[RMDB]
RNA sequence: GGGAACGACUCGAGUAGAGUCGAAAAUCUUGUCGACGGCAUCGUCGGCGGUGACGUCGAGCCACAGCGCGGUGCCGCCCACCUUGCUGGCGGUUUCGGCCAGGUUCUCGGCGGCGGACUCCACAUCCCGUAAAUGGUGAUUCGUCACCAUUUACGGAAAAGAAACAACAACAACAAC
Reactivity to 2A3 in 0.01 (KOAc 150mM, MgCl2 10mM, bicine 150mM(pH8.5), 24C), signal-to-noise 5, nucleotides 027 to 126: u020c010u040u190g040u020c010g010a010c010g030g140c100a170u210c120g080u020c020g030g040c040g020g020u040g010a010c000g000u030c010g010a010g020c030c020a070c050a060g010c130g000c020g120g010u040g020c020c000g010c010c010c000a050c010c100u090u180g030c100u050g060g000c030g100g020u040u150u110c020g050g000c020c010a060g020g020u140u040c020u010c010g020g010c000g000g030c040g000g030a050c020u030c030c020a070c000a130u070c000
Reactivity to DMS in 0.01 (KOAc 150mM, MgCl2 10mM, bicine 150mM(pH8.5), 24C), signal-to-noise 4, nucleotides 027 to 126: u010c040u010u010g020u000c020g020a000c020g000g030c220a140u010c020g020u000c120g000g010c050g000g000u000g010a070c050g020u000c040g010a070g010c120c050a090c120a100g010c060g010c090g000g000u000g010c020c010g000c030c030c120a110c150c090u000u000g020c100u010g000g010c040g000g000u000u010u000c050g020g010c020c050a070g000g000u010u010c010u000c040g000g010c180g000g010c020g010g000a110c040u000c020c020a070c130a160u010c060
Source information: The record gives the reactivity of an RNA of 177 nucleotides to 2A3 and DMS. The 2A3 profile rests on 6,912 reads.